[RMDB]
RNA sequence: GGGAACGACUCGAGUAGAGUCGAAAACAUGGCGAUGACGGCCUGCAGGUCGUCGCGCUUCUUGCUGGUGACCCGGACCUCGUCGCCCUGGAUCUGGGUUUUGACGUUCUUGGGGCCUGCGUCGCGGCAGUGGCGAAACUUUCGAGUUUCGCCACUGAAAAGAAACAACAACAACAAC
Reactivity to 2A3 in 0.01 (KOAc 150mM, MgCl2 10mM, bicine 150mM(pH8.5), 24C), signal-to-noise 1, nucleotides 027 to 126: c030a080u130g090g000c030g130a220u100g000a040c000g000g020c040c060u190g140c120a120g010g000u010c000g000u010c010g010c010g030c000u070u030c010u060u130g030c010u090g020g100u040g060a030c000c000c010g000g060a130c030c050u060c070g020u000c040g020c030c000c020u010g090g100a130u100c120u110g050g000g000u040u020u060u160g020a000c000g030u080u020c070u140u220g000g000g000g040c040c000u000g000c070g030u060c050g000c020g050g060
Reactivity to DMS in 0.01 (KOAc 150mM, MgCl2 10mM, bicine 150mM(pH8.5), 24C), signal-to-noise 2, nucleotides 027 to 126: c090a100u010g000g030c010g010a050u010g020a020c010g010g010c010c000u000g030c300a150g030g010u000c000g040u000c000g000c030g010c020u010u010c080u000u000g020c030u000g010g020u010g000a030c010c010c090g000g010a040c090c000u000c030g000u010c080g000c030c010c010u010g010g010a110u000c190u010g000g010g000u000u010u010u010g020a060c030g000u010u000c130u010u020g030g000g000g010c020c020u000g000c280g020u010c030g010c040g010g010